RNA sequence: GGGAACGACUCGAGUAGAGUCGAAAAAACAUGGUCCCAAAACGGCGGAAAGAUCAACCUGAGGAUCCAACCCGCAGAAAGACAUUUGGUCGGGUACCUGGGUAUAUAGGACGAGUGAAGGAGGUAACACACGCAGAUACUUCGGUAUCUGCGUGUGAAAAGAAACAACAACAACAAC
Reactivity to 2A3 in 0.01 (KOAc 150mM, MgCl2 10mM, bicine 150mM(pH8.5), 24C), signal-to-noise 2, nucleotides 027 to 126: a030a000c280a150u300g130g000u080c020c000c000a130a000a000a000c030g000g000c080g000g000a120a010a000g100a030u010c120a000a010c000c010u100g150a070g140g010a030u050c010c000a070a070c050c000c010g000c000a010g200a000a140a000g170a120c140a060u040u080u170g040g030u190c040g000g010g010u000a030c040c040u030g000g000g000u010a020u000a010u000a180g000g000a040c030g040a050g020u100g030a090a000g000g050a060g020g000u010a090a000
Reactivity to DMS in 0.01 (KOAc 150mM, MgCl2 10mM, bicine 150mM(pH8.5), 24C), signal-to-noise 2, nucleotides 027 to 126: a020a080c220a100u000g000g000u020c000c000c000a100a070a160a120c120g000g000c010g000g020a070a140a080g000a030u030c040a060a010c190c000u000g000a180g000g000a050u010c060c060a040a080c090c080c020g040c080a080g010a040a050a040g000a100c110a050u000u060u000g030g000u040c050g030g000g000u000a040c120c000u020g020g020g000u010a070u000a130u010a000g010g000a110c010g000a040g010u000g020a100a040g000g000a000g000g000u020a070a190
An RNA of 177 nucleotides, treated with 2A3 and DMS and read out base by base. The DMS profile rests on 1,943 reads. For DMS the reverse transcriptase was MarathonRT. It was measured as part of the RMDB library OK1LIB. For 2A3, 703 sequencing reads were counted.